[RMDB]
RNA sequence: GGGAACGACUCGAGUAGAGUCGAAAAAGAGCCGACGAACCUUCCAACCUUCCAACCUUCCAACCUUCCAACCUACCAACCUUCCAAUCUACUCGAGAGGAGGAGGAGGAGGAGGAGGAGGACAUAACAAUCAUCUGACAUUCGUGUCAGAUGAUUGAAAAGAAACAACAACAACAAC
Reactivity to DMS in 0.01 (KOAc 150mM, MgCl2 10mM, bicine 150mM(pH8.5), 24C), signal-to-noise 2, nucleotides 027 to 126: a100g020a080g060c050c050g020a080c100g000a080a150c060c010u010u000c010c070a130a080c060c060u000u000c010c050a060a150c010c010u030u000c030c030a110a110c030c020u000u000c010c000a050a110c060c000u000a110c030c020a070a140c050c050u000u000c020c050a100a130u000c000u000a030c060u000c020g000a020g020a300g050g000a140g000g000a190g010g000a140g000g150a240g000g000a090g020g000a100g030g000a080g010g000a220c280a050u020a050a050
Reactivity to 2A3 in 0.01 (KOAc 150mM, MgCl2 10mM, bicine 150mM(pH8.5), 24C), signal-to-noise 2, nucleotides 027 to 126: a000g090a030g030c060c030g000a050c040g010a060a060c020c000u040u000c010c040a070a060c050c010u070u070c020c010a040a030c020c030u040u020c010c050a100a120c040c000u050u010c040c040a120a100c010c010u070a120c020c010a050a030c010c030u060u000c010c000a030a070u040c030u040a030c020u030c050g020a020g010a010g010g030a040g040g020a020g000g040a080g000g060a060g010g070a030g010g020a030g020g040a030g000g020a000c030a090u150a050a040